The record gives the reactivity of an RNA of 177 nucleotides to DMS and 2A3. Values cover nucleotides 27 to 126. For 2A3, 47,077 sequencing reads were counted. The RNA was probed in 150 mM KOAc, 10 mM MgCl2 and 150 mM bicine (pH 8.5) at 24 C.
RNA sequence: GGGAACGACUCGAGUAGAGUCGAAAAAGCAGGUGCUGUGGGACGACCUUCCCACGUAACGACUGUUAUGAUGCAUACCGAAAUUAACUGACCGGUAUGCGUGUGUCUGACACGAGCAAAAUCGGUCGUUAGUACUUACUUUCGAGUAAGUACUAACAAAAGAAACAACAACAACAAC
Reactivity to DMS in 0.01 (KOAc 150mM, MgCl2 10mM, bicine 150mM(pH8.5), 24C), signal-to-noise 9, nucleotides 027 to 126: a060g010c050a050g000g010u000g010c070u020g010u000g000g000g010a060c210g000a110c150c100u020u000c000c000c000a070c020g010u020a090a090c050g000a090c120u010g000u000u010a060u030g010a040u010g010c000a000u000a000c010c010g000a070a100a100u030u040a070a150c220u020g000a250c140c000g000g010u000a010u000g000c000g010u010g020u010g000u000c080u010g010a040c020a050c010g000a050g000c050a030a050a070a050u010c030g000g000u010c030
Reactivity to 2A3 in 0.01 (KOAc 150mM, MgCl2 10mM, bicine 150mM(pH8.5), 24C), signal-to-noise 9, nucleotides 027 to 126: a000g010c010a010g010g020u050g020c040u150g010u010g010g010g000a020c040g070a060c020c040u060u040c000c000c000a000c000g010u020a060a020c040g100a020c010u020g010u040u030a080u120g110a030u060g000c000a000u000a000c000c000g010a020a020a040u150u060a070a090c050u030g080a030c010c010g000g000u000a000u000g000c000g000u020g000u000g000u000c060u030g000a000c020a020c100g010a010g000c020a030a040a030a100u020c010g000g000u000c000